Chemical mapping of a 177-nucleotide RNA with DMS and 2A3. The reactions ran in a buffer of 150 mM KOAc, 10 mM MgCl2 and 150 mM bicine (pH 8.5), at 24 C.
[RMDB]
RNA sequence: GGGAACGACUCGAGUAGAGUCGAAAAGCAUUGGGAAAGUUAAUCAAAAGUGCAUCAAAACUUUCCCUAAACGAAAUGAAAAUCGUUAUGAUGCACUUUUGACAUCGAUUAAGAUGAAUAGACACAAGAGAGAACUUAAAUUCGUUUAAGUUCUCUCAAAAGAAACAACAACAACAAC
Reactivity to DMS in 0.01 (KOAc 150mM, MgCl2 10mM, bicine 150mM(pH8.5), 24C), signal-to-noise 5, nucleotides 027 to 126: g010c160a080u010u000g010g010g010a110a100a160g010u000u010a090a150u000c020a010a010a020a020g020u000g000c000a000u000c010a050a090a080a120c140u010u000u000c000c000c000u000a020a030a010c010g000a000a070a080u000g000a110a050a120a090u000c030g010u000u000a230u010g000a000u000g010c000a010c000u000u010u000u000g000a070c010a010u000c010g000a130u020u010a060a120g010a020u000g010a090a120u000a080g000a090c100a070c240a080a090
Reactivity to 2A3 in 0.01 (KOAc 150mM, MgCl2 10mM, bicine 150mM(pH8.5), 24C), signal-to-noise 5, nucleotides 027 to 126: g040c040a080u150u240g040g010g080a040a110a070g060u080u110a110a070u060c010a000a000a010a000g010u000g000c010a000u000c010a050a050a060a110c010u010u030u020c000c000c000u010a000a010a000c000g050a020a030a050u280g100a120a060a000a100u020c020g000u030u030a050u140g000a000u010g000c010a020c000u000u000u010u010g000a000c000a010u000c010g120a170u250u210a130a110g010a020u030g030a040a040u070a080g110a020c040a020c050a290a000
2A3 adducts were read by reverse transcription with SuperScript II with manganese.